[RMDB]
RNA sequence: GGGAACGACUCGAGUAGAGUCGAAAAGAUAUGGAGGUCAUCGACAAUCAUUGGGACAUGCGUACGGAUGUCGGAAACGACAUCGUACGCAACAGCCCACGGUGAUUGUCGAUGACCUCCUAAGUCACACACUUACAUUCUUCGGAAUGUAAGUGUGAAAAGAAACAACAACAACAAC
Reactivity to DMS in 0.01 (KOAc 150mM, MgCl2 10mM, bicine 150mM(pH8.5), 24C), signal-to-noise 3, nucleotides 027 to 126: g000a050u000a300u020g000g030a000g000g020u000c000a000u000c010g020a000c000a020a010u000c000a000u000u020g000g000g000a020c040a280u000g000c000g020u000a000c000g070g030a040u000g010u000c000g010g000a140a080a230c010g030a000c000a000u010c010g000u000a000c000g010c000a000a000c300a190g000c010c000c010a110c300g040g010u000g000a010u000u000g000u000c010g000a010u000g000a000c000c000u000c000c000u000a000a040g010u000c070a300